Source: RMDB library OK3TST, as collected in RNAgym. This 207-nucleotide RNA was probed chemically with 2A3. Reactivities are given for positions 27 through 156.
[RMDB]
RNA sequence: GGGAACGACUCGAGUAGAGUCGAAAAGGACCAGCUGAGGGGUCCGACAUAGCCUCAGCUUCUAGCCUGUCACUCACCAGGCGAAUCAUGUGAGUGUUGAUGCUUUUGCAUCUUAAUCUGACUGAGUCGUAGCAGUCUCAUGAACUAUGACGUUAGAGCAGUGCUACUGAUUCGUCAGUAGCACUGCAAAAGAAACAACAACAACAAC
Reactivity to 2A3 in 0.01 (KOAc 150mM, MgCl2 10mM, bicine 150mM(pH8.5), 24C), signal-to-noise 2, nucleotides 027 to 156: g000g000a000c000c000a010g000c010u000g000a010g010g000g000g000u030c000c000g000a000c020a110u140a020g030c000c000u010c000a000g020c030u020u110c040u020a000g000c000c000u000g000u020c000a000c000u000c000a010c000c000a000g000g000c020g020a090a040u140c080a030u030g000u020g000a000g020u020g010u090u090g000a000u000g000c000u100u210u200u300g010c030a010u010c000u000u090a190a130u090c140u140g000a000c000u020g000a000g000u000c000g030u020a020g000c000a000g030u000c050u120c110a160u140g130a140a030c000u000a020u040g000a000c010g070u060u190a110g000a040